Chemical mapping of a 207-nucleotide RNA with DMS and 2A3. Conditions: 150 mM KOAc, 10 mM MgCl2 and 150 mM bicine (pH 8.5), 24 C. For DMS the reverse transcriptase was MarathonRT.
[RMDB]
RNA sequence: GGGAACGACUCGAGUAGAGUCGAAAAGCAUGCUGGCCAACCCAACCCCACGAUCCUCCAUCGGCAUGAUCAUGAUGUGUUCUCAAAUAUCAGGCCAGUAAAUCACCAUGCUCGUGCUGGUAAAGGCAACUUAUGCCCAAGUUCGCUUGGGCAUAAAGUACAAAACGAUAUUCGUAUCGUUUUGUACAAAAGAAACAACAACAACAAC
Reactivity to DMS in 0.01 (KOAc 150mM, MgCl2 10mM, bicine 150mM(pH8.5), 24C), signal-to-noise 3, nucleotides 027 to 156: g030c070a080u000g010c010u010g000g000c010c010a160a190c080c050c020a100a160c030c010c020c010a070c150g000a130u020c020c010u000c020c060a020u010c040g020g000c030a040u020g000a040u000c010a040u010g000a030u000g040u000g000u000u000c040u000c040a090a070a160u000a130u000c060a080g010g000c000c020a040g000u000a010a050a090u010c020a020c010c000a030u000g000c120u000c010g030u000g020c000u010g010g010u000a020a080a050g010g030c060a070a060c060u000u000a010u000g010c050c000c010a020a040g000u000u010c300g040c020u010u000g020g000g030c000a000u000a000a020a150
Reactivity to 2A3 in 0.01 (KOAc 150mM, MgCl2 10mM, bicine 150mM(pH8.5), 24C), signal-to-noise 6, nucleotides 027 to 156: g030c020a020u050g000c000u000g000g000c000c000a030a040c070c000c060a050a050c030c010c010c030a080c090g070a130u080c010c020u050c030c020a080u040c010g000g000c000a000u010g000a010u000c000a000u000g030a020u060g030u010g020u060u020c050u020c040a060a090a030u280a120u150c090a070g010g000c000c000a000g000u020a000a040a040u090c010a010c060c000a000u000g010c010u010c010g010u010g000c000u000g000g010u040a120a130a010g010g010c010a030a030c050u030u010a000u010g000c000c000c000a020a000g010u030u050c080g010c120u000u020g050g000g000c010a000u000a000a000a000